RNA sequence: GGGAACGACUCGAGUAGAGUCGAAAAGAAAUCCCAUGCGUGUCAUCUGACUUCCACGUCUCGCUCUGCCUUCGCUCUGCGCUGUCUGCGUUCUGCAGCUUGGGUUUGGCUAGGGCAGAGGAUUCUGGUGAACAUUGAUGUUCGCAUCAAUGUUCACAAAAGAAACAACAACAACAAC
Reactivity to DMS in 0.01 (KOAc 150mM, MgCl2 10mM, bicine 150mM(pH8.5), 24C), signal-to-noise 2, nucleotides 027 to 126: g000a080a110a120u010c010c010c010a080u010g010c090g010u000g000u010c040a100u010c050u010g000a110c130u000u010c040c030a100c160g010u010c010u000c040g020c030u000c000u010g010c010c020u000u000c080g000c010u000c070u000g010c000g000c000u000g000u000c000u000g000c020g010u010u010c200u020g000c000a010g020c040u000u000g000g010g020u000u000u000g000g000c000u000a030g000g000g000c000a010g010a020g000g010a050u000u000c010u010g010
Reactivity to 2A3 in 0.01 (KOAc 150mM, MgCl2 10mM, bicine 150mM(pH8.5), 24C), signal-to-noise 2, nucleotides 027 to 126: g040a010a080a040u050c010c010c010a000u070g010c030g040u080g070u040c010a100u000c070u150g070a130c020u120u030c040c030a030c030g050u000c020u030c040g220c000u000c040u000g000c000c020u010u000c020g050c030u020c010u040g030c290g060c080u010g070u090c010u020g010c010g100u300u130c110u270g020c000a030g020c000u020u050g060g000g000u000u090u040g010g000c020u010a000g000g000g050c000a010g000a000g000g000a010u070u000c030u100g060